[RMDB]
RNA sequence: GGGAACGACUCGAGUAGAGUCGAAAAACAUGCUGGCCAACCCAACCUCACGAUCCUCCAUCGGCAUGAUCAUGAUGUGUUCUCAAAUAUCAGGCCAGUAAAUCACCAUGCUCGUGCUGGUAAAGGCAACUUAUGCCCAAGUUCGCUUGGGCAUAAACCAUUGUUUGCCGUUCGCGGCAAACAAUGGAAAAGAAACAACAACAACAAC
Reactivity to 2A3 in 0.01 (KOAc 150mM, MgCl2 10mM, bicine 150mM(pH8.5), 24C), signal-to-noise 2, nucleotides 027 to 156: a000c110a030u110g010c000u000g000g010c000c030a020a020c110c010c060a070a030c050c020u070c010a200c090g050a140u060c000c040u000c020c010a030u040c030g050g010c000a010u010g030a010u000c000a040u010g070a080u040g020u000g000u100u020c020u020c020a040a090a000u200a060u170c060a030g010g000c000c010a000g000u010a000a000a030u110c000a000c080c000a020u040g000c000u000c030g030u020g010c040u000g020g000u070a130a090a010g020g000c020a040a020c030u020u040a000u000g000c000c000c000a040a000g010u020u060c170g000c110u000u000g060g000g010c000a000u000a000a000a000